[RMDB]
RNA sequence: GGGAACGACUCGAGUAGAGUCGAAAAGAUAUGGACCGUACCGAGGCGUCCAUGGCGACGAAGUCGGAAACGACAGAGCCAUUAACGUACAGUACGGUCCUAAGUCAAACCUAUGUUCGCAUAGGAACAGAUGAGAUAUCUUCGGAUAUCUCAUCUGAAAAGAAACAACAACAACAAC
Reactivity to DMS in 0.01 (KOAc 150mM, MgCl2 10mM, bicine 150mM(pH8.5), 24C), signal-to-noise 6, nucleotides 027 to 126: g000a040u000a300u000g000g010a020c000c000g020u000a000c000c000g000a290g010g010c000g010u000c050c200a020u000g000g020c000g030a180c260g010a080a100g000u000c000g010g000a080a060a160c010g000a010c000a040g000a180g000c000c000a010u000u010a080a010c000g000u000a010c010a020g000u000a010c000g000g010u000c010c000u000a010a060g000u000c040a070a130a170c000c000u000a010u010g000u000u010c150g020c010a020u000a010g000g000a100a190
Reactivity to 2A3 in 0.01 (KOAc 150mM, MgCl2 10mM, bicine 150mM(pH8.5), 24C), signal-to-noise 4, nucleotides 027 to 126: g020a030u070a050u130g000g000a000c000c000g000u010a000c000c010g070a150g100g000c010g000u030c030c020a000u010g010g000c020g010a300c040g030a160a020g010u020c010g030g000a120a060a030c010g000a000c010a030g030a010g030c010c000a000u010u020a030a000c010g000u020a010c000a020g000u000a000c000g000g010u010c000c000u010a010a000g000u000c010a020a010a050c000c000u000a000u020g020u010u100c300g000c140a010u010a030g000g020a040a070
An RNA of 177 nucleotides, treated with DMS and 2A3 and read out base by base. For DMS the reverse transcriptase was MarathonRT. The reactions ran in a buffer of 150 mM KOAc, 10 mM MgCl2 and 150 mM bicine (pH 8.5), at 24 C.